Chemical mapping of a 177-nucleotide RNA with DMS and 2A3. 2A3 adducts were read by reverse transcription with SuperScript II with manganese. The 2A3 profile rests on 2,701 reads. For DMS, 1,223 sequencing reads were counted. The RNA was probed in 150 mM KOAc, 10 mM MgCl2 and 150 mM bicine (pH 8.5) at 24 C.

RNA sequence: GGGAACGACUCGAGUAGAGUCGAAAAGAUAUGGAUCGUACUGGGAGCGACGUGUCGGAAACGACACCUCGCGAAGAACAGUGACGAUCCUAAGUCAAACCUAAACUACCUUCGGGUAGUUUAGGAACUCUAGAUGGCUGUUCGCAGCCAUCUAGAGAAAAGAAACAACAACAACAAC
Reactivity to DMS in 0.01 (KOAc 150mM, MgCl2 10mM, bicine 150mM(pH8.5), 24C), signal-to-noise 1, nucleotides 027 to 126: g000a020u000a080u000g020g000a000u010c000g020u000a080c000u000g000g010g020a120g050c030g040a000c300g010u000g000u000c010g030g000a040a070a030c000g010a020c010a000c020c080u000c000g080c000g030a120a030g000a090a300c020a030g000u000g010a040c000g020a000u010c000c000u000a000a100g000u010c000a080a130a200c000c000u010a000a010a000c000u000a010c000c000u010u020c220g020g000g010u000a000g000u000u000u000a000g000g010a010a060
Reactivity to 2A3 in 0.01 (KOAc 150mM, MgCl2 10mM, bicine 150mM(pH8.5), 24C), signal-to-noise 1, nucleotides 027 to 126: g000a010u060a030u070g010g010a010u020c000g030u010a000c010u010g000g020g090a300g050c020g000a000c000g000u010g010u010c000g020g030a020a030a010c000g020a000c000a010c000c000u010c010g020c010g000a080a030g020a050a010c010a000g030u120g190a060c010g000a000u000c000c000u000a010a020g020u000c040a130a020a300c010c010u000a000a000a000c000u000a010c010c020u030u120c220g050g020g010u010a000g010u020u020u010a000g000g000a010a000